[RMDB]
RNA sequence: GGGAACGACUCGAGUAGAGUCGAAAACUUACUCUUUUCUGUAAAGAGGAGACUGCUGGACUCUCCGCCCAAGCCGAGAUGGGCCUCAGUUCCGAGCGAAGAGCCGAACCGGGAAGAGGAAGCGCCCUAGGGUCGACGUUCGCGUCGACCAAAAGAAACAACAACAACAAC
Reactivity to 2A3 in 0.01 (KOAc 150mM, MgCl2 10mM, bicine 150mM(pH8.5), 24C), signal-to-noise 2, nucleotides 027 to 129: c000u020u170a260c000u030c000u030u000u010u000c090u100g160u250a010a010a020g020a010g010g000a000g030a020c010u020g070c010u060g050g010a020c010u000c040u000c060c000g050c030c010c000a020a020g010c000c000g000a040g000a010u010g000g040g000c000c000u050c000a010g000u030u000c010c010g010a010g000c030g010a010a050g000a030g030c010c040g020a000a010c010c020g000g000g050a000a040g000a040g010g000a010a000g000c020g010c030c000c010u060a050g050
Reactivity to DMS in 0.01 (KOAc 150mM, MgCl2 10mM, bicine 150mM(pH8.5), 24C), signal-to-noise 2, nucleotides 027 to 129: c050u000u110a120c040u020c000u050u000u010u000c120u060g040u010a030a040a080g000a030g010g030a030g050a110c040u030g000c100u020g060g000a100c000u050c050u030c040c060g000c020c000c040a100a130g020c000c010g000a010g020a000u010g140g000g000c030c000u020c020a100g000u000u000c060c080g030a090g030c000g010a040a060g010a020g000c200c160g030a060a020c030c020g000g040g020a030a020g040a070g010g010a050a040g050c110g000c040c020c010u030a070g020